[RMDB]
RNA sequence: GGGAACGACUCGAGUAGAGUCGAAAACUCAAUGACUUCGGUCAUUGAGAAAGGUCAAAAGUCCAACUGAGCAGCUAUGAGCUCAUACAUCGUCAUAGCAAAAAACACACACGUUCGCGUGUGUGAACCAUGACUAAAAGUUCGCUUUUAGUCAUGGAAAAGAAACAACAACAACAAC
Reactivity to 2A3 in 0.01 (KOAc 150mM, MgCl2 10mM, bicine 150mM(pH8.5), 24C), signal-to-noise 1, nucleotides 027 to 126: c000u000c010a000a000u010g020a000c010u030u040c170g080g000u000c000a000u000u000g000a000g000a050a040a000g060g020u140c060a130a000a010a100g050u020c040c030a060a060c140u060g000a010g010c000a010g000c010u010a000u040g000a000g000c000u000c000a040u230a070c090a040u120c150g050u000c030a010u020a000g000c040a000a000a000a050a120a000c020a000c000a000c010a000c000g010u020u040c200g020c000g080u000g000u010g000u000g000a000a000
Reactivity to DMS in 0.01 (KOAc 150mM, MgCl2 10mM, bicine 150mM(pH8.5), 24C), signal-to-noise 3, nucleotides 027 to 126: c010u000c000a000a000u000g000a020c000u000u020c210g020g010u000c010a000u000u000g010a010g010a020a070a120g010g000u010c150a030a050a110a190g000u010c020c000a100a140c270u020g010a000g000c010a160g000c000u000a000u000g000a020g000c020u010c010a070u020a120c220a060u000c160g000u000c000a000u000a010g010c010a000a030a010a050a060a080c000a020c000a000c000a010c020g020u010u000c190g010c010g040u000g000u010g020u010g010a070a130